[RMDB]
RNA sequence: GGGAACGACUCGAGUAGAGUCGAAAAGAGAGAGUGAGGGGGGAGGUGCUGCACACUUUUAAAUGGCCAGAUCUCAUGAGAACAAAUUCACUUUCAUUAGAAUAGUACCAAGAUGGAUGGUGCUAAACCAUUUAUGAGAAACUGCCCCCAUGACCCAACGACCAGUAAAUUUCGAUUUACUGGUCGUAAAAGAAACAACAACAACAAC
Reactivity to DMS in 0.01 (KOAc 150mM, MgCl2 10mM, bicine 150mM(pH8.5), 24C), signal-to-noise 1, nucleotides 027 to 156: g020a250g000a060g060a000g040u010g040a160g000g000g010g020g040g010a090g010g010u000g050c100u020g000c030a150c090a250c040u010u010u010u020a050a020a070u010g020g010c030c090a160g000a170u010c020u030c060a020u010g000a060g000a040a290c080a050a090a110u000u000c050a190c100u000u000u000c000a100u000u000a040g000a040a300u000a020g010u000a000c020c010a070a170g010a100u000g000g020a150u000g000g010u000g010c010u000a040a080a100c020c010a050u000u000u000a040u000g010a090g000a170a040a090c040u010g010c000c000c000c000c000a010u000g000a170c000c000c010a140
This 207-nucleotide RNA was probed chemically with DMS. Reactivities are given for positions 27 through 156. DMS adducts were read by reverse transcription with MarathonRT.